Conditions: 150 mM KOAc, 10 mM MgCl2 and 150 mM bicine (pH 8.5), 24 C. Structure probing data (DMS and 2A3) for a 177-nucleotide construct.
RNA sequence: GGGAACGACUCGAGUAGAGUCGAAAAUCGUAAACCUUGAGCUUGCCGUCGAUCGGUUCGAUCACGAUGGAUGCGCCGGUCGCAUCAUGCAGCGUGUAGUGAGCGGGCGGGGUAAAUCCCAGGUCCACAGUUUUAUUAGCUUCGGCUAAUAAAACUGAAAAGAAACAACAACAACAAC
Reactivity to DMS in 0.01 (KOAc 150mM, MgCl2 10mM, bicine 150mM(pH8.5), 24C), signal-to-noise 3, nucleotides 027 to 126: u010c110g020u000a090a110a050c050c030u010u010g020a080g010c050u000u010g030c030c100g020u000c060g010a010u000c050g010g000u000u000c060g010a060u000c030a060c100g000a110u010g000g010a040u000g000c120g010c030c130g000g030u000c000g020c070a050u000c060a080u000g000c070a080g000c050g030u000g030u000a080g010u000g000a170g010c040g010g000g040c040g000g000g010g010u000a040a050a130u000c000c010c020a140g010g000u000c050c050a140
Reactivity to 2A3 in 0.01 (KOAc 150mM, MgCl2 10mM, bicine 150mM(pH8.5), 24C), signal-to-noise 2, nucleotides 027 to 126: u120c020g000u040a160a010a090c010c000u040u070g100a020g050c050u030u060g030c030c010g050u100c040g020a080u040c030g140g000u140u120c050g090a040u070c020a000c110g110a100u170g090g000a010u030g010c020g040c030c050g150g070u170c000g000c000a020u020c000a040u130g040c040a030g020c040g030u020g010u030a130g040u050g080a030g000c000g010g000g000c010g010g020g000g000u010a070a080a030u040c010c000c000a000g040g060u000c030c060a050
Values are in units of 0.01, from 0 to 300, in steps of 10. It was measured as part of the RMDB library OK2TRN. The 2A3 profile rests on 2,077 reads. DMS adducts were read by reverse transcription with MarathonRT.